[RMDB]
RNA sequence: GGGAACGACUCGAGUAGAGUCGAAAAGAAGAGCAGUCAGAUAAUCUUGUGCAGCAUGAAUGCUCGUAACUGCAUAGCACAAGUAGAUGUAGAUAACUUUAAUCUCACAUAGCGGAGGAGCCGCAGACAGGUACCGUACGUUCGCGUACGGUACCUGAAAAGAAACAACAACAACAAC
Reactivity to DMS in 0.01 (KOAc 150mM, MgCl2 10mM, bicine 150mM(pH8.5), 24C), signal-to-noise 1, nucleotides 027 to 126: g000a210a150g030a090g020c000a070g000u020c020a090g000a130u050a090a140u050c000u000u000g000u030g020c000a200g080c030a100u050g000a020a060u020g010c000u000c050g000u000a070a200c010u000g000c020a090u030a030g030c010a000c000a000a000g010u000a000g020a080u000g000u050a060g000a040u060a130a130c080u020u030u000a190a080u000c020u020c040a160c120a070u030a140g000c010g000g020a170g000g000a060g000c000c000g060c060a040g040a230
Reactivity to 2A3 in 0.01 (KOAc 150mM, MgCl2 10mM, bicine 150mM(pH8.5), 24C), signal-to-noise 2, nucleotides 027 to 126: g080a010a000g020a000g010c010a000g070u030c000a000g010a210u090a090a190u100c000u000u060g000u010g000c040a000g000c000a070u140g080a100a040u100g090c010u000c120g060u020a020a050c000u010g000c000a050u080a060g020c010a000c010a000a000g000u030a010g000a120u030g050u080a040g040a040u020a190a060c000u080u030u110a110a000u000c020u020c060a060c030a110u140a020g010c000g030g030a050g120g070a030g100c010c000g010c000a000g000a040